[RMDB]
RNA sequence: GGGAACGACUCGAGUAGAGUCGAAAAGGCCGAGGACUACGGUCCUCGGCAACAACCGUCACAACGGCUUCCUGGCGUGACGGGGUUAACCCCAACGGAGCAAGUGCGAGCUUACGAGCUCGCACAAUUUAGGAGAAUUCCUUCGGGAAUUCUCCAACUAUCCAUUAACGUUCGCGUUAAUGGAUAGAAAAGAAACAACAACAACAAC
Reactivity to 2A3 in 0.01 (KOAc 150mM, MgCl2 10mM, bicine 150mM(pH8.5), 24C), signal-to-noise 1, nucleotides 027 to 156: g100g000c000c040g000a010g010g000a000c030u080a050c260g090g000u000c010c000u000c000g000g050c000a000a010c020a000a000c000c000g000u000c000a000c000a060a050c080g060g000c000u170u120c050c040u050g040g010c010g000u000g010a020c000g020g000g000g000u070u130a030a010c010c000c000c030a020a080c130g060g020a030g000c070a230a040g030u000g000c020g000a010g000c030u080u050a070c210g090a000g000c000u000c010g000c030a010c000a000a010u010u040u190a070g000g000a000g000a010a010u000u000c020c000u020u170c210g050g000g000a000a000u000u000c000u000c000c000a000a020